[RMDB]
RNA sequence: GGGAACGACUCGAGUAGAGUCGAAAAGUUAUGAGCAAUGUUAGAUCUAGCAAAUAGAAUGUCAAUCGUUUUAGCAGGCUAUUUGGAAGAGAUACUACUGUUAGAGAGCAAGUUAGACCAUUAUAGGACCGUAGGGAGAUUUCGAUCUCCCUACGGUAAAAGAAACAACAACAACAAC
Reactivity to 2A3 in 0.01 (KOAc 150mM, MgCl2 10mM, bicine 150mM(pH8.5), 24C), signal-to-noise 1, nucleotides 027 to 126: g090u090u090a100u230g070a020g030c050a060a070u080g050u140u100a040g000a050u030c000u020a000g040c010a010a020a020u020a040g000a040a000u050g000u070c010a030a090u090c210g040u040u090u130u150a010g000c010a000g030g030c010u030a030u010u020u050g090g070a100a040g010a050g020a060u070a130c030u010a030c000u060g070u080u000a050g030a000g000a010g050c000a080a000g010u020u080a050g030a000c020c000a000u070u180a090u110a100g000g110
Reactivity to DMS in 0.01 (KOAc 150mM, MgCl2 10mM, bicine 150mM(pH8.5), 24C), signal-to-noise 4, nucleotides 027 to 126: g010u000u000a050u020g020a150g000c040a060a050u000g000u010u000a040g000a080u000c020u020a100g010c020a020a020a020u000a010g000a030a020u000g000u000c080a050a100u020c290g000u010u000u000u010a160g010c000a010g010g000c040u000a020u000u000u000g010g010a090a090g000a050g020a080u000a050c030u000a070c070u010g010u000u010a070g000a110g010a100g000c050a030a060g000u000u010a080g000a170c040c030a050u000u020a080u000a110g000g010